The record gives the reactivity of an RNA of 207 nucleotides to DMS and 2A3. For 2A3, 684 sequencing reads were counted. Values cover nucleotides 27 to 156. Conditions: 150 mM KOAc, 10 mM MgCl2 and 150 mM bicine (pH 8.5), 24 C. DMS adducts were read by reverse transcription with MarathonRT. For DMS, 2,807 sequencing reads were counted. Source: RMDB library OK3TST, as collected in RNAgym.

RNA sequence: GGGAACGACUCGAGUAGAGUCGAAAAGCUGCCCGCAAUUUUCCGCUCAAGUCUUCAAUUUCUCGGCCAGCGCGUUCGCCUUCACUCGCGAAUUGCCUGCUUCCUUGAUGAUCUUGCGGGCCUGGUCCUCAGUGAGGCCGUGCUUCCGCUUGAAGUAUAUAAAACGACUGUUCGCAGUCGUUUUAUAAAAAGAAACAACAACAACAAC
Reactivity to DMS in 0.01 (KOAc 150mM, MgCl2 10mM, bicine 150mM(pH8.5), 24C), signal-to-noise 1, nucleotides 027 to 156: g030c050u000g020c020c000c000g040c050a100a070u010u000u000u000c040c030g040c060u010c070a030a050g040u000c040u010u030c050a130a130u000u000u000c010u010c130g030g010c120c000a050g040c110g080c090g000u020u000c040g030c020c030u000u000c210a140c160u010c100g020c000g030a040a060u000u000g050c000c020u010g020c010u000u010c010c030u010u000g010a060u010g020a030u000c050u000u000g020c020g040g020g020c040c070u000g000g010u010c000c050u010c020a220g000u000g000a130g020g040c040c000g000u000g010c020u000u000c080c060g020c080u010u000g010a100a070g010u000a120
Reactivity to 2A3 in 0.01 (KOAc 150mM, MgCl2 10mM, bicine 150mM(pH8.5), 24C), signal-to-noise 1, nucleotides 027 to 156: g010c000u020g000c000c000c000g010c010a010a000u000u030u110u000c050c000g040c040u050c030a050a050g030u040c050u230u070c100a200a230u130u260u090c100u090c030g090g000c080c040a050g020c020g010c000g110u000u000c000g010c010c010u130u180c110a110c120u050c030g000c000g030a020a030u080u300g020c000c000u020g050c020u090u080c000c010u010u050g040a040u080g000a000u010c000u020u030g000c000g000g000g000c000c030u020g010g020u150c000c020u030c040a120g070u080g140a050g000g010c000c000g000u010g000c010u080u020c000c040g030c000u010u070g030a040a010g090u030a050